[RMDB]
RNA sequence: GGGAACGACUCGAGUAGAGUCGAAAAAAUACGUCCCUGCUCCUUGCACACACCGCCCGUCAAAGCACCCGAGUGAGGUCCGGAUGAGGCCUGGUCACCAGGUCGAAUCUGGGCUUCGCAAGGGGGCCAUAUAUCCCUACUUCGGUAGGGAUAUAUGAAAAGAAACAACAACAACAAC
Reactivity to 2A3 in 0.01 (KOAc 150mM, MgCl2 10mM, bicine 150mM(pH8.5), 24C), signal-to-noise 2, nucleotides 027 to 126: a000a000u190a030c030g040u000c000c010c000u000g020c010u020c000c010u020u090g010c020a010c000a010c000a010c080c020g040c020c010c010g080u110c060a110a070a000g010c000a030c010c000c000g010a010g010u020g000a000g030g000u000c010c010g010g000a000u020g030a010g010g010c010c000u010g000g020u300c120a170c270c000a010g000g000u000c000g000a000a010u000c000u010g000g000g000c010u010u000c000g000c010a000a000g000g000g000g000g020c010
Reactivity to DMS in 0.01 (KOAc 150mM, MgCl2 10mM, bicine 150mM(pH8.5), 24C), signal-to-noise 4, nucleotides 027 to 126: a050a070u000a110c130g010u000c010c020c000u000g020c030u000c020c030u000u010g000c040a080c070a100c070a080c070c020g020c000c020c010g010u000c130a050a110a160g020c010a050c000c010c000g000a300g020u000g000a020g010g020u000c010c000g010g000a020u000g000a300g010g000c000c000u000g020g000u010c150a100c040c000a010g010g000u000c000g000a170a010u000c000u000g010g000g000c010u000u000c000g020c000a020a270g000g010g000g000g000c010

An RNA of 177 nucleotides, treated with 2A3 and DMS and read out base by base. For DMS the reverse transcriptase was MarathonRT. The DMS profile rests on 4,134 reads. The data come from the RNA Mapping Database (RMDB), library RFMREP. Conditions: 150 mM KOAc, 10 mM MgCl2 and 150 mM bicine (pH 8.5), 24 C. For 2A3 the reverse transcriptase was SuperScript II with manganese.